[RMDB]
RNA sequence: GGGAACGACUCGAGUAGAGUCGAAAAGCGCACCCAGAUCUGGUCGCGCCUGGGCGGCCACUGGACCUCACAGGACGCGGAGCUGGGCGCCGAGGGCCCACUGGGAGAGGAAGGGCGGGGCUGCCACUCGUAUACGAUAGUUCGCUAUCGUAUACGAAAAAGAAACAACAACAACAAC
Reactivity to 2A3 in 0.01 (KOAc 150mM, MgCl2 10mM, bicine 150mM(pH8.5), 24C), signal-to-noise 6, nucleotides 027 to 126: g050c040g000c010a030c020c010c000a000g010a080u070c050u150g150g150u240c020g010c020g030c060c000u020g010g030g020c040g010g030c010c060a120c120u170g070g060a290c000c000u020c010a050c010a030g030g100a160c020g000c000g030g000a020g000c010u030g000g020g000c000g000c010c000g010a070g010g060g000c000c050c010a040c070u090g020g030g050a140g020a070g100g070a140a110g080g030g070c190g010g000g000g010c030u070g050c030c000a070c020
Reactivity to DMS in 0.01 (KOAc 150mM, MgCl2 10mM, bicine 150mM(pH8.5), 24C), signal-to-noise 6, nucleotides 027 to 126: g000c100g030c030a060c020c000c010a010g000a130u000c060u010g010g010u010c030g020c050g010c020c010u010g000g010g060c300g000g000c000c010a090c160u000g010g000a100c020c010u010c040a070c020a040g000g000a120c020g010c010g010g000a040g010c030u000g000g000g000c030g020c030c040g000a100g010g000g000c000c010c020a150c090u000g010g000g010a140g000a110g000g000a130a110g000g000g000c150g000g000g000g020c060u000g000c060c040a090c150